[RMDB]
Chemical mapping of a 177-nucleotide RNA with 2A3 and DMS. DMS adducts were read by reverse transcription with MarathonRT. For 2A3 the reverse transcriptase was SuperScript II with manganese.
RNA sequence: GGGAACGACUCGAGUAGAGUCGAAAAGUAUUAUACGUGCUUGUCAUGAUCUAGGAUUGGCCACAGUUGCAGUAUAUUCCCUGGCAGAUCAAGAAGCUUUACACGUGCUCCUAGCAGACGAAGCCGUUGCUUCCUUCUUUUUCGAAAGAAGGAAGCAAAAAGAAACAACAACAACAAC
Reactivity to 2A3 in 0.01 (KOAc 150mM, MgCl2 10mM, bicine 150mM(pH8.5), 24C), signal-to-noise 1, nucleotides 027 to 126: g080u100a080u300u070a090u100a040c120g030u150g060c000u010u080g000u070c020a130u050g070a130u100c020u000a010g090g030a110u090u130g100g000c050c040a030c010a060g040u070u080g070c000a020g070u030a030u000a010u100u050c000c000c020u020g110g020c040a030g010a170u170c030a030a050g080a050a020g080c010u070u100u130a060c130a020c020g040u090g000c000u040c010c000u010a000g030c000a010g030a060c060g080a000a000g000c050c030g000u030
Reactivity to DMS in 0.01 (KOAc 150mM, MgCl2 10mM, bicine 150mM(pH8.5), 24C), signal-to-noise 2, nucleotides 027 to 126: g000u010a070u000u000a100u010a090c070g020u000g000c010u010u000g010u010c020a080u010g000a110u000c010u000a040g000g010a170u000u000g010g000c050c020a070c090a070g010u010u000g010c080a090g010u000a030u000a150u000u000c010c000c010u010g020g000c020a070g000a070u000c060a070a060g000a070a100g020c040u000u010u000a090c130a060c130g030u000g010c040u000c010c000u000a040g020c060a040g030a050c030g000a040a020g000c010c040g020u010
Description:
The 2A3 profile rests on 814 reads. Values cover nucleotides 27 to 126. The reactions ran in a buffer of 150 mM KOAc, 10 mM MgCl2 and 150 mM bicine (pH 8.5), at 24 C.